[RMDB]
RNA sequence: GGGAACGACUCGAGUAGAGUCGAAAACUCUGUGUGACAGAGAGACACUCUGACUGUGUCACACAGACACUCUGAGUCACACACUCUGACUGAGACUCACAGUCACUCUGAGAGAGUCUGAGUGUCAGACUAUAGCGACUUUCGAGUCGCUAUAGUCAAAAGAAACAACAACAACAAC
Reactivity to DMS in 0.01 (KOAc 150mM, MgCl2 10mM, bicine 150mM(pH8.5), 24C), signal-to-noise 4, nucleotides 027 to 126: c090u000c010u000g000u000g000u010g000a060c010a040g010a070g000a200g010a050c060a070c050u000c070u000g010a070c030u000g010u000g000u000c030a030c050a040c070a070g000a050c080a040c010u010c010u000g000a040g020u000c030a060c140a130c130a090c160u010c050u000g000a020c010u000g000a120g000a070c030u000c040a120c020a020g000u010c160a080c180u020c020u000g000a090g010a100g010a040g000u000c000u000g000a020g020u000g020u000c030a100
Reactivity to 2A3 in 0.01 (KOAc 150mM, MgCl2 10mM, bicine 150mM(pH8.5), 24C), signal-to-noise 4, nucleotides 027 to 126: c020u010c000u000g000u000g050u070g050a020c010a020g060a010g020a020g030a070c010a030c100u090c040u050g060a070c020u060g030u020g020u140c010a010c000a000c020a040g020a000c020a020c010u010c020u050g070a010g020u020c010a030c010a010c010a050c130u080c050u050g020a030c010u020g050a010g030a090c010u000c020a040c000a020g050u080c040a030c070u080c040u050g080a090g010a010g000a010g070u020c010u030g010a010g000u000g010u010c030a030
Chemical mapping of a 177-nucleotide RNA with DMS and 2A3.
For DMS the reverse transcriptase was MarathonRT.
The reactions ran in a buffer of 150 mM KOAc, 10 mM MgCl2 and 150 mM bicine (pH 8.5), at 24 C.
It was measured as part of the RMDB library OK2TRN.